[RMDB]
RNA sequence: GGGAACGACUCGAGUAGAGUCGAAAAUAAAACAGUGCGUGGUAGCACUACCAUGACCAUGUUUCGGCACAUGGUCAGCCGAGUACAGCUACGCCUGUACUCAGCGAACAACAACAACAACAAAAAACAAUCAUGGGAAGUUCGCUUCCCAUGAUUGAAAAGAAACAACAACAACAAC
Reactivity to DMS in 0.01 (KOAc 150mM, MgCl2 10mM, bicine 150mM(pH8.5), 24C), signal-to-noise 2, nucleotides 027 to 126: u010a090a030a070a130c170a000g040u000g000c020g010u020g030g010u000a180g000c000a000c000u000a160c040c030a270u000g000a020c020c000a040u000g010u000u000u000c170g040g020c240a110c000a000u000g010g010u000c020a020g050c030c040g030a010g010u010a000c010a000g000c030u000a090c300g010c170c020u000g010u000a000c000u000c000a010g020c000g020a120a070c080a030a040c010a050a020c030a020a020c030a000a020c060a010a040a090a070a070a110
Reactivity to 2A3 in 0.01 (KOAc 150mM, MgCl2 10mM, bicine 150mM(pH8.5), 24C), signal-to-noise 1, nucleotides 027 to 126: u100a010a060a030a010c090a000g020u020g020c050g070u120g090g160u190a040g000c010a000c000u000a040c040c030a060u090g000a000c000c000a010u030g050u030u120u160c150g120g060c080a000c000a020u000g000g000u000c010a000g000c000c010g000a000g000u010a000c000a010g000c040u090a100c150g080c030c000u000g010u000a020c010u000c010a010g000c000g000a020a010c010a000a010c010a010a010c000a000a000c010a010a010c030a040a050a010a010a000a020